Overview:
Structure probing data (DMS and 2A3) for a 177-nucleotide construct.
RNA sequence: GGGAACGACUCGAGUAGAGUCGAAAAAGAGACAGAUGAAGACGGGGAACAGGCAGAGCAUGGAUGGAGCUACUAACAGAAGUACUUGUUUUGGCUCUACCCAUGCACUGCCUCUUCCCUGGCUUGUUUAUUGAGGUAGUUUCGACUACCUCAAUAAAAAAGAAACAACAACAACAAC
Reactivity to DMS in 0.01 (KOAc 150mM, MgCl2 10mM, bicine 150mM(pH8.5), 24C), signal-to-noise 7, nucleotides 027 to 126: a060g000a120g010a060c090a090g010a140u010g000a030a020g010a050c010g020g000g000g000a010a010c120a010g010g000c000a000g000a060g010c000a000u000g000g000a060u000g000g010a010g000c010u000a020c270u000a010a010c010a010g000a140a170g040u020a070c170u030u010g010u000u000u000u000g000g000c000u000c000u000a010c010c000c000a000u000g010c000a010c000u000g000c000c010u000c030u000u000c000c000c000u000g000g000c010u000u000g010u010
Reactivity to 2A3 in 0.01 (KOAc 150mM, MgCl2 10mM, bicine 150mM(pH8.5), 24C), signal-to-noise 9, nucleotides 027 to 126: a000g150a000g030a020c080a040g140a070u200g100a100a010g030a010c000g000g000g000g000a000a000c000a010g000g000c000a000g000a010g000c000a000u000g000g010a010u020g000g010a000g010c000u020a040c050u020a040a010c000a020g080a200a050g210u170a130c080u110u060g010u000u010u010u010g000g000c000u000c000u000a000c000c000c000a000u000g000c000a000c000u000g000c000c010u000c000u000u000c000c000c010u000g000g010c000u020u020g010u040
Background: For 2A3 the reverse transcriptase was SuperScript II with manganese. The RNA was probed in 150 mM KOAc, 10 mM MgCl2 and 150 mM bicine (pH 8.5) at 24 C.